[RMDB]
RNA sequence: GGGAACGACUCGAGUAGAGUCGAAAAACUAGCGUUACAAAGGACAACACCAUCUACAUAACCGUGGAACCUAAAGACGUUGGAACCUGGCUUUCCAUUCGAACGCGACUGGGCAAUGGAUCAUGCAAUGUAUGUGCGUGUUCGCACGCACAUACAUAAAAGAAACAACAACAACAAC
Reactivity to DMS in 0.01 (KOAc 150mM, MgCl2 10mM, bicine 150mM(pH8.5), 24C), signal-to-noise 2, nucleotides 027 to 126: a130c050u020a030g010c040g010u000u000a050c160a050a130a080g040g030a060c040a060a090c060a060c040c030a070u000c090u000a080c040a020u000a120a050c090c050g000u040g000g000a080a080c020c060u000a070a040a100g000a060c100g000u010u000g000g020a070a050c030c020u010g020g030c100u000u000u000c000c000a100u020u010c140g010a060a040c060g050c080g000a080c110u030g000g000g010c090a040a040u000g010g000a050u000c070a060u020g030c080a080
Reactivity to 2A3 in 0.01 (KOAc 150mM, MgCl2 10mM, bicine 150mM(pH8.5), 24C), signal-to-noise 2, nucleotides 027 to 126: a000c030u040a020g060c020g020u020u060a040c090a090a090a030g030g000a050c030a090a010c000a170c010c000a010u010c010u040a060c010a130u100a100a040c050c010g050u040g020g010a050a050c020c040u040a100a090a000g050a000c050g020u010u010g000g020a010a030c010c020u020g140g020c080u000u050u030c010c000a040u000u140c050g040a110a040c080g040c020g190a060c050u060g030g030g060c030a050a070u060g020g020a070u080c020a000u180g110c050a060
An RNA of 177 nucleotides, treated with DMS and 2A3 and read out base by base. For 2A3, 1,464 sequencing reads were counted. For DMS the reverse transcriptase was MarathonRT. The data come from the RNA Mapping Database (RMDB), library OK2TRN.